[RMDB]
RNA sequence: GGGAACGACUCGAGUAGAGUCGAAAAGAACGCCACUUCGGUGGCGUUCGAAGAUCUACCAGACGUAGAUCACUAUCGUGUGAGACAUCGAUAGAUGUCAAAUGGUCCGGAAGUUCGCUUCCGGAAAGAGGUCAACUAUCUUCGGAUAGUUGACCUCAAAAGAAACAACAACAACAAC
Reactivity to 2A3 in 0.01 (KOAc 150mM, MgCl2 10mM, bicine 150mM(pH8.5), 24C), signal-to-noise 1, nucleotides 027 to 126: g000a010a020c050g010c010c010a000c010u060u050c220g100g000u000g000g010c000g010u000u010c000g010a000a000g020a010u020c010u000a010c000c100a080g070a300c090g010u000a000g000a000u010c030a030c020u130a130u100c120g130u160g040u080g160a120g000a030c010a010u000c020g050a020u100a250g030a010u020g050u020c020a000a140a120u120g070g030u030c000c020g020g020a000a000g010u060u090c180g060c100u000u000c010c030g000g000a010a010a010
Reactivity to DMS in 0.01 (KOAc 150mM, MgCl2 10mM, bicine 150mM(pH8.5), 24C), signal-to-noise 2, nucleotides 027 to 126: g000a000a030c000g020c000c000a000c000u010u020c210g030g050u000g010g010c000g020u000u010c020g010a090a140g000a000u010c000u000a000c000c040a230g020a100c240g010u000a000g010a000u000c000a170c080u010a050u010c160g040u000g010u010g010a300g000a030c010a000u000c000g020a150u020a110g000a010u000g000u000c010a040a060a040u010g010g020u010c020c010g000g010a010a010g010u000u000c200g000c000u000u010c000c000g020g010a010a010a060